Chemical mapping of a 207-nucleotide RNA with 2A3 and DMS.
RNA sequence: GGGAACGACUCGAGUAGAGUCGAAAAACUAGUAUGGUAAAUUUAUGCAACUGAAUAAUCGCGAUUUAAAAAGUAUCAUUGAUAAUGAAGCAUUGGCUUAUGCUAUGUACACGGUUGAAAACCGUGCUAUUCCAAAUAUGAUUGAUGGAUUUAAGCCACAUAAGUACGAGUUCGCUCGUACUUAUGUAAAAGAAACAACAACAACAAC
Reactivity to 2A3 in 0.01 (KOAc 150mM, MgCl2 10mM, bicine 150mM(pH8.5), 24C), signal-to-noise 5, nucleotides 027 to 156: a000c060u070a050g070u040a100u150g030g000u060a050a090a150u140u190u100a150u130g030c020a020a040c100u090g090a120a090u140a110a050u130c040g000c040g060a020u040u110u270a060a090a020a000a000g060u060a050u090c020a040u010u140g060a060u080a200a060u150g080a030a030g000c000a000u010u020g000g000c000u020u020a000u020g020c020u040a030u110g020u010a020c000a000c010g000g070u020u060g090a120a080a000a010c000c000g010u000g000c000u080a070u060u000c020c000a030a040a120u120a090u120g120a130u100u140g030a040u060g030g010a000u040u100u100a000a000g000c000c000
Reactivity to DMS in 0.01 (KOAc 150mM, MgCl2 10mM, bicine 150mM(pH8.5), 24C), signal-to-noise 3, nucleotides 027 to 156: a100c130u000a050g010u000a040u000g000g030u010a040a060a100u010u000u000a070u020g030c050a110a250c040u000g020a080a090u010a090a060u010c080g020c050g020a150u000u000u000a060a090a110a050a120g020u010a080u000c020a080u000u010g000a140u000a070a080u010g010a100a140g030c020a070u010u010g050g000c010u000u000a090u000g010c010u010a030u000g020u000a040c000a020c000g000g040u010u010g000a090a060a160a120c010c000g050u000g020c000u000a040u000u010c050c000a060a070a150u020a060u010g010a130u000u000g010a100u000g010g020a140u000u020u000a030a050g000c000c180
Source information
Values cover nucleotides 27 to 156. Source: RMDB library OK3TST, as collected in RNAgym. The RNA was probed in 150 mM KOAc, 10 mM MgCl2 and 150 mM bicine (pH 8.5) at 24 C.